The record gives the reactivity of an RNA of 177 nucleotides to 2A3. The reactions ran in a buffer of 150 mM KOAc, 10 mM MgCl2 and 150 mM bicine (pH 8.5), at 24 C.
RNA sequence: GGGAACGACUCGAGUAGAGUCGAAAAGAAAACGCGAAACAUCCGCUAGAUGCAAAAAUAAAAUGGGAAACGAGCCCUUCUCGAAAAAUAAAAAUGGCGAAGUAGGCCUAAACUACAAAUAAAGAAAGGGAUACAAUAACUUCGGUUAUUGUAUCCCAAAAGAAACAACAACAACAAC
Reactivity to 2A3 in 0.01 (KOAc 150mM, MgCl2 10mM, bicine 150mM(pH8.5), 24C), signal-to-noise 1, nucleotides 027 to 126: g040a000a050a000a020c110g050c010g100a080a130a000c000a020u190c110c020g120c200u100a020g000a060u050g000c110a020a030a010a030a000u190a050a000a080a160u300g020g000g000a020a000a060c040g000a010g110c000c060c000u080u000c000u000c010g070a110a200a000a000a000u140a050a060a030a000a060u080g000g000c000g050a080a000g040u000a000g080g000c020c070u120a130a000a000c000u000a000c020a000a070a000u190a030a200a070g260a070a030a000